The data come from the RNA Mapping Database (RMDB), library OK3TST. Chemical mapping of a 207-nucleotide RNA with 2A3 and DMS. For DMS the reverse transcriptase was MarathonRT. The reactions ran in a buffer of 150 mM KOAc, 10 mM MgCl2 and 150 mM bicine (pH 8.5), at 24 C.
[RMDB]
RNA sequence: GGGAACGACUCGAGUAGAGUCGAAAAUUUCUGAGGGUCAGGAAUCUGGGAGCAGCUUAGUGGGUGUGAUUCUGGCUCAGUGUCUCUCAUGAUGUUGCAGUCAAUAUGUCAGCUGGUAACGCAGUCAUUGUAACAUCCGGAUAAUUCAUAUCCAAGAACCACGUAAUAAUUUCGAUUAUUACGUGGUAAAAGAAACAACAACAACAAC
Reactivity to 2A3 in 0.01 (KOAc 150mM, MgCl2 10mM, bicine 150mM(pH8.5), 24C), signal-to-noise 5, nucleotides 027 to 156: u030u060u030c020u030g020a040g020g000g030u040c020a010g050g030a040a040u020c040u100g030g010g020a020g020c030a010g000c030u050u110a060g030u070g070g020g000u070g020u030g040a030u110u020c040u060g050g000c010u000c030a040g010u040g040u040c000u000c000u000c040a070u160g010a000u020g010u040u010g000c010a020g030u070c050a080a100u120a080u260g080u060c030a020g020c010u020g060g030u070a050a030c040g000c050a010g030u050c020a050u030u060g010u030a020a000c000a020u000c020c040g000g010a020u040a030a030u130u120c060a060u060a040u120c030c000a000a030g090a030
Reactivity to DMS in 0.01 (KOAc 150mM, MgCl2 10mM, bicine 150mM(pH8.5), 24C), signal-to-noise 3, nucleotides 027 to 156: u000u000u000c030u000g020a140g000g010g010u000c080a080g010g000a070a080u000c050u010g000g000g000a180g030c050a100g010c050u000u010a040g040u000g020g030g000u000g020u000g010a150u000u000c080u000g020g000c030u000c020a060g030u010g000u000c010u010c060u000c070a170u000g000a060u000g000u030u000g000c030a070g000u000c050a050a120u010a080u000g030u010c090a100g010c040u000g020g010u000a070a100c140g030c040a120g010u000c050a050u010u010g030u000a030a040c030a060u000c020c080g000g010a080u000a040a140u000u010c120a080u000a080u010c010c010a050a210g010a100